[RMDB]
Notes
Chemical mapping of a 177-nucleotide RNA with 2A3 and DMS. The DMS profile rests on 1,107 reads. The data come from the RNA Mapping Database (RMDB), library M2PK90. The reactions ran in a buffer of 150 mM KOAc, 10 mM MgCl2 and 150 mM bicine (pH 8.5), at 24 C. For 2A3 the reverse transcriptase was SuperScript II with manganese. The 2A3 profile rests on 4,138 reads.

RNA sequence: GGGAACGACUCGAGUAGAGUCGAAAAAUUUACGACUCUCAAGCGAAGCGAGUGCUAGCAUGCUCGAAAGCACUAAACAAAACAGGAAACUGAAAAUCGAGCAAUCGCUAGAGUCGUUCCCAUACAAGUAUUUAAAAUGAUUCGUCAUUUUAAAUACAAAAGAAACAACAACAACAAC
Reactivity to 2A3 in 0.01 (KOAc 150mM, MgCl2 10mM, bicine 150mM(pH8.5), 24C), signal-to-noise 3, nucleotides 027 to 126: a000u120u130u100a050c010g000a000c000u020c000u000c030a050a000g000c010g060a050a010g050c030g060a090g120u110g030c000u000a010g030c010a030u020g000c000u010c020g030a110a010a000g030c040a010c050u090a050a080a020c080a050a060a020a000c000a000g010g070a130a010a010c010u030g050a090a030a040a130u010c000g000a000g000c000a000a060u050c030g000c010u010a010g000a000g000u000c000g010u000u000c000c010c010a000u010a010c000a010a030
Reactivity to DMS in 0.01 (KOAc 150mM, MgCl2 10mM, bicine 150mM(pH8.5), 24C), signal-to-noise 2, nucleotides 027 to 126: a120u050u000u020a160c010g000a080c000u000c000u010c060a270a130g010c050g010a060a110g020c040g000a090g040u010g020c020u000a050g000c030a300u000g020c010u030c010g010a020a060a070g020c030a000c040u010a030a040a110c180a110a080a100a090c040a000g010g010a090a170a140c000u000g000a070a040a100a110u000c020g000a010g000c000a060a160u000c030g000c000u000a110g000a000g010u000c000g030u010u000c000c020c000a030u050a060c110a130a110